An RNA of 177 nucleotides, treated with DMS and 2A3 and read out base by base. The data come from the RNA Mapping Database (RMDB), library OK1LIB.
[RMDB]
RNA sequence: GGGAACGACUCGAGUAGAGUCGAAAAUUGUAUCCUUGUCAUUCGGUGUUAUAUCAUAUUCGAAUGGCUUUGUCAGAUAGGCAAAUAGGAAGAUUCCCAAAACUAUCAACUCUAUGAUUCGCACCGUGGUACUCAUAGGAUUCGUCCUAUGAGUACCAAAAGAAACAACAACAACAAC
Reactivity to DMS in 0.01 (KOAc 150mM, MgCl2 10mM, bicine 150mM(pH8.5), 24C), signal-to-noise 1, nucleotides 027 to 126: u070u020g050u060a080u000c000c000u010u000g010u000c000a000u000u000c010g000g000u070g040u050u060a120u170a120u010c120a000u000a030u050u030c050g000a040a000u010g000g010c060u000u000u000g000u000c150a100g010a000u000a100g030g000c000a040a060a040u000a060g040g010a000a250g000a060u000u000c000c000c000a050a010a110a090c130u000a040u000c130a300a110c130u020c300u000a070u000g030a000u000u000c000g000c000a170c000c010g000u020
Reactivity to 2A3 in 0.01 (KOAc 150mM, MgCl2 10mM, bicine 150mM(pH8.5), 24C), signal-to-noise 5, nucleotides 027 to 126: u130u110g080u150a080u020c010c000u010u030g000u020c000a000u000u000c030g020g020u060g130u270u080a190u040a100u300c110a080u130a110u180u270c020g000a000a000u000g000g000c000u040u030u010g000u000c010a010g040a240u080a060g030g020c020a020a030a020u100a030g030g000a040a050g050a140u000u050c000c000c000a010a050a000a010c040u030a020u040c020a020a110c040u030c010u100a080u120g050a080u060u100c050g000c020a070c000c050g090u050